The record gives the reactivity of an RNA of 207 nucleotides to 2A3. Conditions: 150 mM KOAc, 10 mM MgCl2 and 150 mM bicine (pH 8.5), 24 C.

[RMDB]
RNA sequence: GGGAACGACUCGAGUAGAGUCGAAAAACACCUUGGAGUCAUGGUUGCUCACAGCCACUUCUCCCGUGACGCGAAGACGAAAAUGCACCAUCAGUGUUAGGUACGUUAACAGCGCGCUGGUCACCACGAGGUACAUUGCGAUCUUGGCAAACAGCCACACGGCUUCAGAAUUCGUUCUGAAGCCGUGAAAAGAAACAACAACAACAAC
Reactivity to 2A3 in 0.01 (KOAc 150mM, MgCl2 10mM, bicine 150mM(pH8.5), 24C), signal-to-noise 1, nucleotides 027 to 156: a000c000a010c000c030u030u100g050g050a030g000u080c070a020u040g050g010u000u070g020c060u040c060a230c040a000g030c000c030a020c030u110u060c010u000c030c020c000g050u060g040a010c080g000c010g040a050a000g010a020c010g040a000a000a000a170u040g000c000a000c010c030a100u140c020a030g000u000g050u090u080a030g040g010u000a010c020g130u220u070a110a090c030a090g020c000g000c010g010c010u020g020g150u070c000a000c010c000a010c070g030a000g010g010u020a000c000a020u000u040g000c000g160a200u070c000u020u000g120g000c000a050a100a050c010a090g030c050c090a030